This 177-nucleotide RNA was probed chemically with 2A3 and DMS. The data come from the RNA Mapping Database (RMDB), library OK2TST. Values are in units of 0.01, from 0 to 300, in steps of 10. The RNA was probed in 150 mM KOAc, 10 mM MgCl2 and 150 mM bicine (pH 8.5) at 24 C. 2A3 adducts were read by reverse transcription with SuperScript II with manganese.
RNA sequence: GGGAACGACUCGAGUAGAGUCGAAAAAGAAUUUCCCGUAUCUUGUUGCUUACCAAGCGACGGUGUCGGCCAAGGUCUGGCUCGCUCCACCAAGCUGGGACACCAUGUGGAAGUGCCUAAUUCGCCAACCAUGAGUCAUGUUCGCAUGACUCAUGGUAAAAGAAACAACAACAACAAC
Reactivity to 2A3 in 0.01 (KOAc 150mM, MgCl2 10mM, bicine 150mM(pH8.5), 24C), signal-to-noise 1, nucleotides 027 to 126: a040g140a020a020u050u000u000c020c010c040g000u070a150u100c060u030u220g020u010u040g030c020u060u010a160c000c010a100a030g010c010g040a050c030g000g000u080g170u270c030g060g000c040c000a070a020g140g100u060c130u040g130g030c070u050c040g030c030u000c010c030a040c010c020a010a040g000c030u060g010g010g020a000c080a070c020c000a070u170g020u100g090g030a000a070g000u070g050c020c000u090a120a050u100u130c070g000c020c040a000
Reactivity to DMS in 0.01 (KOAc 150mM, MgCl2 10mM, bicine 150mM(pH8.5), 24C), signal-to-noise 3, nucleotides 027 to 126: a090g010a160a120u010u010u000c020c000c010g020u010a070u000c040u020u010g010u000u000g000c040u010u000a170c110c100a090a040g000c060g000a100c120g010g000u000g020u010c030g000g020c010c030a070a110g000g020u000c160u000g000g000c000u020c060g000c100u000c040c010a040c030c040a180a250g020c050u000g010g000g000a080c080a070c040c040a080u000g000u020g000g000a070a120g030u000g020c020c040u020a040a150u020u000c060g010c070c050a140